[RMDB]
RNA sequence: GGGAACGACUCGAGUAGAGUCGAAAAGGACCCGUCCCGCAGCCAGUCGGAAGAAGAAUAAAACUGCCUCGAGGCAGCGCACAGACUGGUUGGAUCGCUCGACGAUCAUGGCAGCAUCAGCGACCAAUGCAAAGUCAUAGUUCGCUAUGACUUUGCAAAAAGAAACAACAACAACAAC
Reactivity to DMS in 0.01 (KOAc 150mM, MgCl2 10mM, bicine 150mM(pH8.5), 24C), signal-to-noise 3, nucleotides 027 to 126: g000g010a120c030c010c020g000u000c000c000c020g010c080a050g000c000c000a010g010u000c000g020g010a230a100g000a130a110g000a160a110u020a100a050a170a140c010u010g000c000c000u020c230g020a170g000g010c000a020g020c090g000c140a120c090a130g010a030c000u020g000g050u000u010g000g000a030u000c050g000c020u010c130g020a100c010g020a060u000c080a070u030g000g000c100a070g000c050a040u030c040a050g000c010g010a070c020c040a010a100
Reactivity to 2A3 in 0.01 (KOAc 150mM, MgCl2 10mM, bicine 150mM(pH8.5), 24C), signal-to-noise 3, nucleotides 027 to 126: g030g040a060c010c000c000g020u030c010c000c010g030c010a000g000c010c000a000g020u020c010g080g010a040a040g020a060a010g120a210a060u200a140a070a030a020c000u010g000c010c040u150c140g080a300g030g000c000a000g000c000g010c010a100c020a070g020a000c010u010g050g000u040u030g010g010a020u020c010g030c060u060c100g160a200c010g010a070u030c020a050u060g040g000c040a040g010c000a050u020c020a050g010c010g090a050c010c030a040a030
About this RNA: This 177-nucleotide RNA was probed chemically with DMS and 2A3. Source: RMDB libraries RFM100 and RFMREP, as collected in RNAgym. DMS adducts were read by reverse transcription with MarathonRT.